Structure probing data (2A3 and DMS) for a 177-nucleotide construct. For DMS the reverse transcriptase was MarathonRT. The RNA was probed in 150 mM KOAc, 10 mM MgCl2 and 150 mM bicine (pH 8.5) at 24 C. Source: RMDB library OK1LIB, as collected in RNAgym.

RNA sequence: GGGAACGACUCGAGUAGAGUCGAAAACAAAACAAAAAGAUAGCAAAGCACGCAUGCUAUCAGAGAUGAACUAAGCAAGCGAGCAUGCUUAGAAAACAAAACAAAACAAAAACAAAACAAAACAAAAUGAAUGUAUAAAGUUCGCUUUGUGCGUUCAAAAAGAAACAACAACAACAAC
Reactivity to 2A3 in 0.01 (KOAc 150mM, MgCl2 10mM, bicine 150mM(pH8.5), 24C), signal-to-noise 5, nucleotides 027 to 126: c010a000a040a000a010c070a000a060a030a010a000g010a010u020a000g020c000a000a060a010g060c020a020c070g060c020a020u040g000c000u000a000u010c010a000g030a010g000a070u210g030a070a020c000u010a020a000g000c010a020a050g030c010g070a010g010c010a000u010g000c000u000u000a010g020a030a050a000a000c040a010a050a010a000c040a010a060a010a010c070a010a090a020a010a000c050a010a080a000a000c040a020a070a010a000c040a020a080a020a010
Reactivity to DMS in 0.01 (KOAc 150mM, MgCl2 10mM, bicine 150mM(pH8.5), 24C), signal-to-noise 4, nucleotides 027 to 126: c030a060a090a040a120c130a090a070a110a160a070g000a050u020a000g000c000a020a080a190g010c020a040c080g020c050a220u000g000c000u010a010u000c020a050g000a140g010a150u010g020a080a090c030u010a040a010g010c020a040a060g020c050g010a010g000c030a010u000g000c000u000u000a010g010a050a050a070a090c060a060a070a040a050c130a050a070a050a080c180a040a060a010a070a080c100a050a060a060a050c110a030a070a080a020c110a060a020a040a090